[RMDB]
RNA sequence: GGGAACGACUCGAGUAGAGUCGAAAAAGCCACCGCUACGGCGGUGGCAAGUAGAUAAGUUGGUGCUUAGACCACGCCCUCUACCGUAAUAAUAGAUAAAUAGGCGAGUAUCAGUACGCUGAUACAAAAAACACUCACACGUUCGCGUGUGAGUGAAGUCUUUCAUACCGUUCGCGGUAUGAAAGACAAAAGAAACAACAACAACAAC
Reactivity to 2A3 in 0.01 (KOAc 150mM, MgCl2 10mM, bicine 150mM(pH8.5), 24C), signal-to-noise 1, nucleotides 027 to 156: a010g000c010c000a000c000c000g000c010u030a070c270g130g000c020g000g000u090g010g000c020a000a000g010u000a000g000a030u050a170a050g040u030u070g010g000u130g040c140u180u120a010g050a050c000c000a000c000g000c000c000c010u030c000u000a030c030c080g030u060a010a090u060a140a010u060a120g070a020u230a070a040a060u100a040g000g040c060g020a020g060u010a000u010c000a020g020u060a030c270g000c090u040g000a000u010a000c000a000a160a000a000a000a000c000a000c000u000c000a010c000a010c010g010u080u070c300g020c010g080u020g000u000g000a000g000u000g000a010a010